An RNA of 177 nucleotides, treated with DMS and 2A3 and read out base by base. For 2A3, 9,697 sequencing reads were counted. It was measured as part of the RMDB library M2PK50. 2A3 adducts were read by reverse transcription with SuperScript II with manganese. The reactions ran in a buffer of 150 mM KOAc, 10 mM MgCl2 and 150 mM bicine (pH 8.5), at 24 C.

[RMDB]
RNA sequence: GGGAACGACUCGAGUAGAGUCGAAAAUACGACGUAUUCGUACGUCGUAAAGGUACGAAAGUACAAAGGAGCAAAAGCAUGAGCUCCUAAAUAUCAUGCAAAACACGAGCCGAUUCGUCGGCUCGAACGUUCUGGAAGUAUUCGUACUUCCAGAACGAAAAGAAACAACAACAACAAC
Reactivity to DMS in 0.01 (KOAc 150mM, MgCl2 10mM, bicine 150mM(pH8.5), 24C), signal-to-noise 2, nucleotides 027 to 126: u000a010c010g000a030c000g010u000a010u010u000c200g010u000a010c000g020u000c000g030u000a000a090a070g040g010u000a000c010g010a130a140a200g020u000a000c000a110a140a160g000g000a000g010c010a140a060a090a080g010c000a010u000g000a020g000c000u000c010c000u010a030a010a020u000a080u010c000a000u000g000c000a130a030a120a140c200a180c010g000a010g000c000c000g000a050u000u030c180g010u000c000g000g020c000u000c010g000a020a080
Reactivity to 2A3 in 0.01 (KOAc 150mM, MgCl2 10mM, bicine 150mM(pH8.5), 24C), signal-to-noise 4, nucleotides 027 to 126: u050a000c000g000a000c010g000u020a010u020u090c190g030u050a010c010g000u000c000g000u000a040a010a010g100g000u010a000c020g040a150a030a020g000u010a000c040a050a180a060g010g010a010g010c010a020a120a140a040g010c000a010u000g010a000g020c010u000c000c000u030a010a010a000u070a010u010c000a000u010g020c000a060a050a030a040c160a010c030g000a000g000c010c000g000a010u010u050c150g060u000c000g100g000c000u000c000g000a000a010